An RNA of 307 nucleotides, treated with 2A3 and DMS and read out base by base. The RNA was probed in 150 mM KOAc, 10 mM MgCl2 and 150 mM bicine (pH 8.5) at 24 C. For 2A3 the reverse transcriptase was SuperScript II with manganese. It was measured as part of the RMDB library POS240.
[RMDB]
RNA sequence: GGGAACGACUCGAGUAGAGUCGAAAAGAGUUCGUACGCGAACUCACACUUGCUACGGCAAGUGAGUGUGUGCUUCGGCACACACAGAACGUCUACGGACGUUCAGCUGUCGUACGCGACAGCACCAUGUCGCUACGGCGACAUGGAACCGGUUCUCGUGAGAGAACCGGAGAUGUUCUUCGGAACAUCAUAUCAGUUAUAUGACUGACGGAACGUGGAAUUAACCACAUGAAGUAUAACGAUGACAAUGCCGACCGUCUGGGCGUAGUUGGCGAUUCGUCGCCAACAAAAGAAACAACAACAACAAC
Reactivity to 2A3 in 0.01 (KOAc 150mM, MgCl2 10mM, bicine 150mM(pH8.5), 24C), signal-to-noise 9, nucleotides 027 to 266: g000a000g000u010u010c010g010u040a050c280g000c010g130a000a000c000u000c000a000c000a000c000u000u000g000c010u030a060c220g140g000c000a000a000g000u010g030a160g010u000g000u000g000u000g000c020u050u060c200g110g000c000a000c000a000c000a000c000a010g010a010a000c000g000u000c010u030a060c280g130g000a000c000g000u000u010c020a040g000c000u000g000u000c010g020u040a040c290g010c010g120a000c000a000g000c000a010c000c000a000u000g000u000c000g000c010u030a050c290g130g000c000g000a000c000a000u000g000g010a010a060c000c000g000g000u000u000c000u000c000g030u060g020a060g000a000g000a020a000c000c000g000g000a030g000a000u000g010u000u000c010u030u060c190g090g000a000a010c000a000u000c000a010u050a030u160c020a010g000u010u010a030u000a010u090g040a070c070u040g010a010c010g010g020a200a070c080g010u020g000g040a090a110u300u090a240a110c010c010a010c010a030u080g020a020a010g020u010a010u010a040a010c040g070a120u190g060a050c080a170a190u220g020c010c010g020a030c000c000g010u010c020u050g040g000g000c000g010u020a040
Reactivity to DMS in 0.01 (KOAc 150mM, MgCl2 10mM, bicine 150mM(pH8.5), 24C), signal-to-noise 4, nucleotides 027 to 266: g000a020g000u010u000c000g000u020a090c190g060c010g010a010a010c000u000c010a250c020a010c010u000u000g010c000u000a110c220g020g000c000a010a010g010u000g000a130g010u010g020u000g020u000g000c000u000u020c220g020g010c000a000c000a010c000a000c010a090g010a010a010c000g010u000c000u000a150c210g040g000a000c000g020u000u000c020a090g010c000u010g000u000c000g020u000a120c260g040c030g010a000c000a010g010c020a100c010c010a010u000g000u000c000g000c000u000a100c190g010g020c000g000a010c010a000u010g000g010a120a050c020c000g010g010u000u000c010u000c000g010u030g000a150g000a020g000a000a000c010c000g000g010a020g010a000u000g000u000u000c000u000u020c170g010g000a020a010c010a010u000c000a110u020a040u000c020a290g000u000u000a020u000a030u000g000a110c050u000g000a030c040g000g010a160a090c150g010u010g010g010a190a120u010u030a100a150c000c010a010c010a130u010g010a070a280g000u000a010u000a020a030c010g000a050u000g000a140c240a090a050u010g010c010c010g000a080c010c000g000u010c010u010g020g000g010c010g010u000a080